[RMDB]
RNA sequence: GGGAACGACUCGAGUAGAGUCGAAAAUGCCUUUAGGCGAGGCGCUAUCGGUGGCGAUGAUGCGUAGAGAGCACCCCGAAGUGUCGUCGGUGCUCGGCGCCGUGGCGACAUUGUUCACUGCGGGUGCCUCCGUUCACCAUUUCGAUGGUGAACGGAGAAAAGAAACAACAACAACAAC
Reactivity to DMS in 0.01 (KOAc 150mM, MgCl2 10mM, bicine 150mM(pH8.5), 24C), signal-to-noise 2, nucleotides 027 to 126: u000g000c000c010u000u010u010a140g030g020c060g010a090g020g000c030g010c080u010a070u000c060g010g030u020g000g010c070g000a080u010g000a060u000g010c050g010u010a100g000a090g000a120g020c000a030c000c000c000c030g010a040a100g020u000g010u000c010g020u000c020g000g020u000g000c000u010c190g000g010c000g020c000c020g000u020g020g000c010g010a020c010a040u000u000g010u010u000c080a140c230u000g010c160g000g010g010u000g010c020
Reactivity to 2A3 in 0.01 (KOAc 150mM, MgCl2 10mM, bicine 150mM(pH8.5), 24C), signal-to-noise 2, nucleotides 027 to 126: u100g020c020c000u080u090u130a140g030g020c060g000a040g040g000c020g000c050u050a030u130c020g090g060u040g060g070c060g040a070u080g010a030u130g050c030g050u100a050g010a020g000a010g100c000a010c010c010c000c010g020a040a060g020u010g010u030c010g000u010c010g000g010u040g020c060u100c170g100g040c000g010c000c000g060u030g030g000c010g010a000c010a000u040u160g130u240u180c060a030c090u090g000c150g040g000g010u000g010c000